RNA sequence: GGGAACGACUCGAGUAGAGUCGAAAAGAUAUGGACACCCUUAGGGAGCUGAUGACUCGGAAACGAGUCAAUAGCAUCGAUCUAACAUGGGUGUCCUAAGUCAAAGAUGGGAGUUCGCUCCCAUCAAUCGUGAUAAUUUCUUCGGAAAUUAUCACGAAAAAGAAACAACAACAACAAC
Reactivity to 2A3 in 0.01 (KOAc 150mM, MgCl2 10mM, bicine 150mM(pH8.5), 24C), signal-to-noise 1, nucleotides 027 to 126: g000a020u040a010u130g000g000a000c000a020c020c000c030u000u020a130g090g010g020a130g060c020u020g020a100u030g010a050c020u000c020g020g040a010a010a010c000g010a000g000u030c010a010a000u110a010g000c010a090u300c110g090a110u030c000u080a020a050c040a300u180g010g020g000u000g020u000c000c000u000a000a000g010u000c010a000a000a190g020a000u010g010g000g010a010g020u100u160c260g100c140u000c000c000c000a010u000c010a000a000
Reactivity to DMS in 0.01 (KOAc 150mM, MgCl2 10mM, bicine 150mM(pH8.5), 24C), signal-to-noise 3, nucleotides 027 to 126: g000a030u000a270u000g000g000a020c020a010c000c000c000u000u000a070g010g000g020a060g040c000u010g020a150u000g000a010c020u000c000g000g000a070a090a140c010g000a000g010u000c000a000a040u010a020g010c000a300u000c190g020a050u010c030u010a120a210c300a130u020g010g010g010u000g000u000c000c000u000a020a080g000u000c040a100a070a190g000a020u000g000g010g010a000g000u000u020c270g000c000u000c000c000c010a000u000c000a050a060